[RMDB]
RNA sequence: GGGAACGACUCGAGUAGAGUCGAAAAGUUGAAGUGUUCGCACUUCAACAAACGCUCAACUCAUCGAGCGCAAGACGAAUAGCUACAUAUUCGACAUGAGAAAAAGACUGUAGUUCGCUACAGUCAACAAUGCAUUCUUCUUCGGAAGAAUGCAUUGAAAAGAAACAACAACAACAAC
Reactivity to 2A3 in 0.01 (KOAc 150mM, MgCl2 10mM, bicine 150mM(pH8.5), 24C), signal-to-noise 5, nucleotides 027 to 126: g000u000u000g000a010a010g010u010g030u050u130c170g050c070a010c000u000u010c010a000a000c000a000a030a000c010g010c000u020c010a020a090c030u020c090a080u080c110g010a010g010c070g020c170a080a040g090a040c010g010a020a000u020a020g060c090u250a080c090a220u050a040u010u020c010g030a020c040a070u130g000a080g080a060a080a020a030a010g010a000c000u000g000u010a000g020u030u060c190g000c070u010a000c000a000g000u000c000a000a000
Reactivity to DMS in 0.01 (KOAc 150mM, MgCl2 10mM, bicine 150mM(pH8.5), 24C), signal-to-noise 5, nucleotides 027 to 126: g000u000u000g010a000a010g020u000g020u000u010c180g040c000a000c000u000u000c010a000a010c000a030a090a170c020g000c010u000c010a100a100c030u000c030a060u000c150g000a020g010c000g020c140a060a080g020a070c010g010a010a010u000a010g010c160u010a130c150a110u000a010u000u000c000g000a080c070a030u000g010a030g000a090a080a100a110a100g000a010c010u000g010u000a000g010u000u020c230g020c000u000a000c010a020g000u000c000a060a100